[RMDB]
RNA sequence: GGGAACGACUCGAGUAGAGUCGAAAAGAAGUUGUGUUCGCACAACUUCAAAAGCUAGUAGGUACUGGGCAAGUAGUACCUAGUAGUAGCGCGUUCAAGUAAAAAUCAACCUCUUCGGAGGUUGAAACAAAGUACUUACCUUCGGGUAAGUACUUUGAAAAGAAACAACAACAACAAC
Reactivity to 2A3 in 0.01 (KOAc 150mM, MgCl2 10mM, bicine 150mM(pH8.5), 24C), signal-to-noise 1, nucleotides 027 to 126: g010a000a000g000u000u010g000u010g020u030u090c160g010c060a010c010a000a000c000u010u000c000a000a000a010a000g030c000u020a000g030u000a010g110g000u000a000c010u030g090g220g030c130a090a060g120u080a010g000u000a120c020c000u000a000g000u010a000g000u010a020g000c080g020c040g030u080u110c150a170a060g060u120a060a160a040a000a030u010c000a000a000c000c010u010c000u030u090c220g060g000a000g000g000u000u010g010a000a000a000
Reactivity to DMS in 0.01 (KOAc 150mM, MgCl2 10mM, bicine 150mM(pH8.5), 24C), signal-to-noise 5, nucleotides 027 to 126: g000a020a000g000u000u000g020u000g000u000u010c200g010c000a020c000a000a010c000u000u000c000a040a060a110a190g010c000u000a010g000u000a010g000g010u000a010c000u010g010g010g030c210a090a190g020u000a010g020u000a020c000c000u000a010g000u000a010g010u000a050g010c150g010c130g000u000u000c060a090a110g010u020a020a070a090a160a130u000c000a000a000c000c000u000c000u000u010c210g010g000a010g010g010u000u000g000a010a050a090